[RMDB]
RNA sequence: GGGAACGACUCGAGUAGAGUCGAAAACAGACUGGGAAAGAAGUGGGGCCUAGGGCUGCUAGUCUAAGGAGGGAGGCACAUAGCCAGGAACUUAAUCUGAGUGAAGAAGCAAGGUCUGGGAUCCUUGGUAUCGACUUCAAUUCGUUGAAGUCGAUACAAAAGAAACAACAACAACAAC
Reactivity to 2A3 in 0.01 (KOAc 150mM, MgCl2 10mM, bicine 150mM(pH8.5), 24C), signal-to-noise 1, nucleotides 027 to 126: c030a020g090a030c030u080g000g050g000a090a100a140g040a070a050g120u060g020g000g000g000c000c050u060a060g060g030g020c010u040g010c020u050a030g010u020c020u070a040a040g030g020a030g000g050g000a060g030g000c050a040c010a080u100a000g000c050c000a000g030g010a060a020c000u050u070a070a040u090c050u060g040a030g080u120g050a100a070g040a050a000g060c040a020a050g000g030u000c040u010g030g010g070a030u010c000c000u020u010g060
Reactivity to DMS in 0.01 (KOAc 150mM, MgCl2 10mM, bicine 150mM(pH8.5), 24C), signal-to-noise 2, nucleotides 027 to 126: c090a050g000a040c010u010g020g000g000a110a120a090g010a100a050g000u000g020g010g000g010c060c050u010a060g020g000g000c030u000g010c100u010a060g030u000c040u000a100a080g000g000a100g000g010g000a090g000g000c080a050c160a090u000a100g000c010c040a080g000g000a110a040c110u010u010a100a080u000c050u010g010a130g000u000g010a080a060g010a020a060g000c100a070a090g000g010u000c050u010g000g000g000a110u010c010c000u000u020g040